[RMDB]
RNA sequence: GGGAACGACUCGAGUAGAGUCGAAAAUUUCCUGGGCAAGGCUAAUCCUCCCAGGGUCAGUCGGGGGCUAAGGCGAGGCCGGAAGGCGUAGUCGAAGCGCAGCAGGCAGACAUUCCUGCACCGCGAUUACUAGUCGUUGUUUCGACAACGACUAGUAAAAAGAAACAACAACAACAAC
Reactivity to DMS in 0.01 (KOAc 150mM, MgCl2 10mM, bicine 150mM(pH8.5), 24C), signal-to-noise 5, nucleotides 027 to 126: u010u020u040c010c000u000g000g030g030c200a110a010g020g020c300u010a130a200u020c050c000u010c020c000c020a030g000g000g020u050c090a030g010u000c040g000g000g000g010g010c010u000a060a240g020g000c000g000a160g000g000c020c000g000g120a120a090g000g010c000g020u020a300g000u000c020g000a170a050g000c010g010c090a140g010c000a000g010g020c300a080g000a170c300a160u020u000c010c000u000g010c000a300c040c000g010c010g020a060u010
Reactivity to 2A3 in 0.01 (KOAc 150mM, MgCl2 10mM, bicine 150mM(pH8.5), 24C), signal-to-noise 2, nucleotides 027 to 126: u140u120u060c020c000u020g000g000g000c120a080a040g020g000c100u130a020a140u220c000c050u090c000c000c000a000g030g000g000u060c010a010g050u020c020g020g000g000g060g040c000u070a060a030g040g000c000g030a020g060g000c020c020g060g050a080a030g020g000c010g000u020a020g020u000c000g000a020a000g020c030g000c020a020g010c000a000g040g000c010a000g070a220c030a130u090u100c000c000u030g030c000a010c050c030g040c000g030a010u010